[RMDB]
The record gives the reactivity of an RNA of 177 nucleotides to DMS and 2A3.
For 2A3 the reverse transcriptase was SuperScript II with manganese.
It was measured as part of the RMDB library RFMREP.
For DMS, 3,117 sequencing reads were counted.
For DMS the reverse transcriptase was MarathonRT.
The RNA was probed in 150 mM KOAc, 10 mM MgCl2 and 150 mM bicine (pH 8.5) at 24 C.
For 2A3, 876 sequencing reads were counted.
RNA sequence: GGGAACGACUCGAGUAGAGUCGAAAAGGACGUUAAGCAUUUAUCAUUGAACUAUAAUUGUUCAUUGAAGUCAUUGAUGCAAACUCCUUGGUCACACACACAUACGGCGCGGAAGGCGUGUUUGCUGCAAUUGGGUUGAGUUCGCUCAACCCAAUUGAAAAGAAACAACAACAACAAC
Reactivity to DMS in 0.01 (KOAc 150mM, MgCl2 10mM, bicine 150mM(pH8.5), 24C), signal-to-noise 4, nucleotides 027 to 126: g010g020a030c260g010u000u000a110a120g020c000a000u000u000u010a090u000c010a020u000u000g010a020a000c000u000a110u010a090a130u020u010g000u000u000c000a010u010u000g010a030a120g020u010c300a170u000u000g010a000u000g010c000a160a060a020c020u000c000c010u000u000g010g010u000c030a060c080a060c110a050c050a070c070a040u000a050c090g000g010c040g000c050g000g010a090a150g010g000c050g000u000g000u000u000u000g000c010u000g010
Reactivity to 2A3 in 0.01 (KOAc 150mM, MgCl2 10mM, bicine 150mM(pH8.5), 24C), signal-to-noise 1, nucleotides 027 to 126: g060g000a010c090g000u050u040a110a020g000c020a010u000u070u100a070u070c010a030u000u060g020a010a010c070u020a030u150a300a200u200u100g000u000u000c010a010u010u000g030a060a020g090u100c070a070u000u290g030a010u050g000c000a000a050a000c000u000c000c000u000u000g000g040u070c000a020c000a010c000a010c020a000c000a040u110a220c070g010g080c000g000c030g080g040a130a020g020g030c030g050u020g140u080u110u080g040c030u070g010